Conditions: 150 mM KOAc, 10 mM MgCl2 and 150 mM bicine (pH 8.5), 24 C. Structure probing data (2A3 and DMS) for a 177-nucleotide construct. For 2A3, 3,760 sequencing reads were counted. Values cover nucleotides 27 to 126.

RNA sequence: GGGAACGACUCGAGUAGAGUCGAAAACGGCUCGGGCACAGUGAGCGGGAUGAUGUCGAACCGCACGAACUCGGAUUCUUUGCCGUCCUUGUCGUGCACGGUGGCCAUCGUGCCGUACUCGGUGGGGGGUGUAGUGCUAGUUCGCUAGCACUACACCAAAAGAAACAACAACAACAAC
Reactivity to 2A3 in 0.01 (KOAc 150mM, MgCl2 10mM, bicine 150mM(pH8.5), 24C), signal-to-noise 3, nucleotides 027 to 126: c040g030g000c020u030c020g000g020g020c040a030c030a120g080u060g100a020g030c000g000g000g000a040u050g000a000u040g030u060c040g050a060a010c020c030g040c020a020c010g030a230a120c020u030c020g000g000a000u110u020c080u170u150u260g120c050c050g000u010c000c000u000u020g010u000c020g000u010g000c050a030c140g000g000u010g020g020c020c000a000u030c020g020u070g070c000c020g050u050a070c010u020c040g040g000u060g030g010g010g020
Reactivity to DMS in 0.01 (KOAc 150mM, MgCl2 10mM, bicine 150mM(pH8.5), 24C), signal-to-noise 2, nucleotides 027 to 126: c100g000g000c040u010c050g000g000g010c050a060c090a100g010u010g010a090g000c000g010g010g010a040u000g000a020u000g020u010c030g010a110a080c040c010g000c030a030c010g000a050a090c020u010c110g010g010a030u000u010c130u010u000u010g010c170c180g000u020c010c000u010u010g020u000c010g000u000g010c040a080c090g030g000u010g010g000c120c030a000u000c020g010u010g000c010c020g030u010a050c050u010c040g020g030u000g000g000g010g000